[RMDB]
Source information: This 207-nucleotide RNA was probed chemically with 2A3. Conditions: 150 mM KOAc, 10 mM MgCl2 and 150 mM bicine (pH 8.5), 24 C. Source: RMDB library OK3TST, as collected in RNAgym.

RNA sequence: GGGAACGACUCGAGUAGAGUCGAAAAUCUUAAAUUCUGCUCUUAAAGAAUAGUUUCAACAGCGAGAGGGAACAGAGAGAGAAUUCUAGACAAGUCUAAAAUGAGCAGCACAGGACAGUAGAAUAGUAAUCAUUAACAUUUAGAUGAUAUUGGCCGACCAGUAAUCGCUAUUCGUAGCGAUUACUGGAAAAGAAACAACAACAACAAC
Reactivity to 2A3 in 0.01 (KOAc 150mM, MgCl2 10mM, bicine 150mM(pH8.5), 24C), signal-to-noise 2, nucleotides 027 to 156: u010c000u000u080a070a060a020u070u020c010u010g120c000u010c020u120u110a070a070a030g050a090a080u140a240g040u010u060u110c110a100a090c050a040g050c040g030a030g000a030g060g020g000a050a000c020a020g050a000g000a000g010a000g030a020a190u060u000c010u000a010g000a120c010a070a000g050u050c000u080a030a020a040a040u100g020a030g000c020a010g030c040a040c010a050g060g010a000c010a020g030u030a010g020a070a030u040a030g030u090a060a070u020c010a030u080u060a040a040c030a040u080u060u190a040g000a030u020g000a020u030a040u080u060g030g000c050c010g010a050